[RMDB]
RNA sequence: GGGAACGACUCGAGUAGAGUCGAAAAGAUAUGGAUUGUUCGAUAAGACCCAAUCGGAAACGAUUGAAGGUCUUUUGACGAACUGUCCUAAGUCAAACAAGCAUGUGACUUCGGUCACAUGCUUGAACGAGACACGUUAGUUCGCUAACGUGUCUCGAAAAGAAACAACAACAACAAC
Reactivity to DMS in 0.01 (KOAc 150mM, MgCl2 10mM, bicine 150mM(pH8.5), 24C), signal-to-noise 1, nucleotides 027 to 126: g000a020u010a100u010g000g020a010u010u000g000u000u000c010g030a030u020a020a030g020a000c000c000c000a020a000u010c020g010g020a020a010a090c010g010a040u000u000g000a090a130g000g010u000c000u000u000u010u020g010a300c020g000a000a000c000u000g000u000c000c010u000a010a080g000u010c010a100a080a270c010a010a000g000c000a000u030g010u010g000a020c000u000u000c160g020g000u000c000a000c000a000u000g000c000u000u000g000a060a080
Reactivity to 2A3 in 0.01 (KOAc 150mM, MgCl2 10mM, bicine 150mM(pH8.5), 24C), signal-to-noise 1, nucleotides 027 to 126: g010a010u030a020u060g020g020a010u000u000g000u040u000c000g000a030u050a300a120g000a020c000c030c000a000a000u000c000g000g010a030a020a000c030g010a020u010u050g140a300a180g000g000u000c010u020u010u030u020g010a010c000g000a000a000c010u010g000u000c000c000u020a000a020g030u000c030a050a020a140c000a020a030g000c020a010u000g030u020g020a010c020u040u150c300g100g020u010c010a000c000a000u010g000c000u010u020g010a010a000